[RMDB]
RNA sequence: GGGAACGACUCGAGUAGAGUCGAAAAGAUAUGGAGCUGGGCAGCUUUUGACGAAACCCUACUCGGAAACGAGUAGCGGUUUCGAUAAGCUGCCAGCUCCUAAGUCAAACAUGCACUUCGGUGCAUGCCUAUAGACCAGCUUCGGCUGGUCUAUAGGAAAAGAAACAACAACAACAAC
Reactivity to DMS in 0.01 (KOAc 150mM, MgCl2 10mM, bicine 150mM(pH8.5), 24C), signal-to-noise 3, nucleotides 027 to 126: g000a070u010a300u000g000g000a010g030c000u000g020g040g020c000a020g000c000u000u000u010u010g040a270c160g010a010a000a010c010c000c000u000a010c000u000c000g010g000a140a120a220c010g020a020g020u000a000g010c190g030g000u010u000u000c000g010a100u000a020a020g000c010u010g010c000c000a000g010c000u000c000c000u010a000a060g010u000c020a100a170a300c000a000u000g010c000a000c010u000u020c210g030g020u000g000c000a000u000g000
Reactivity to 2A3 in 0.01 (KOAc 150mM, MgCl2 10mM, bicine 150mM(pH8.5), 24C), signal-to-noise 2, nucleotides 027 to 126: g010a010u060a020u150g010g010a000g050c110u100g050g300g100c010a010g050c030u110u050u210u280g260a090c090g000a000a000a010c000c010c000u010a000c000u010c010g010g050a030a060a060c010g000a000g000u010a000g000c010g000g000u000u010u000c010g010a000u000a000a000g000c000u000g000c000c010a000g000c000u020c000c000u000a000a000g010u000c000a030a120a050c010a010u010g000c000a010c000u080u090c300g150g000u010g000c000a000u000g010